[RMDB]
RNA sequence: GGGAACGACUCGAGUAGAGUCGAAAAUAUGUACCUCACGUGUUUGACUUAAUCAUUUACUGGUUAAAGUCUGUUCAGUGCAAUCGUAGGACUUCUAAGCAAUUAGUUGCACCCGAUACCGAUCAAUUCACAGUUCGUGAUUCGUCACGAACUGUGAAAAAGAAACAACAACAACAAC
Reactivity to DMS in 0.01 (KOAc 150mM, MgCl2 10mM, bicine 150mM(pH8.5), 24C), signal-to-noise 1, nucleotides 027 to 126: u000a000u020g000u060a170c020c000u010c010a040c220g000u000g100u000u000u000g000a070c000u020u000a000a000u000c000a000u050u000u110a110c070u000g050g000u000u000a000a150a000g000u000c000u040g060u060u000c050a000g000u000g010c290a000a000u000c060g040u000a110g080g000a300c050u000u000c000u050a000a010g000c200a060a210u040u000a000g000u000u000g000c000a110c020c000c120g050a130u050a050c040c020g000a260u000c110a000a100u000
Reactivity to 2A3 in 0.01 (KOAc 150mM, MgCl2 10mM, bicine 150mM(pH8.5), 24C), signal-to-noise 2, nucleotides 027 to 126: u290a110u210g060u020a080c000c000u030c000a040c060g100u050g040u120u300u200g050a010c000u000u000a010a000u010c010a060u020u030u290a140c150u060g000g000u000u020a100a100a000g000u000c000u050g110u150u050c030a030g020u000g110c040a050a070u000c010g030u050a050g000g060a050c010u030u000c010u030a030a000g040c010a020a210u050u020a010g110u010u010g030c110a050c000c010c000g040a010u070a070c000c090g040a030u140c050a090a050u030
Annotation
The data come from the RNA Mapping Database (RMDB), libraries RFM100 and RFMREP. The record gives the reactivity of an RNA of 177 nucleotides to DMS and 2A3. For DMS, 741 sequencing reads were counted. The RNA was probed in 150 mM KOAc, 10 mM MgCl2 and 150 mM bicine (pH 8.5) at 24 C.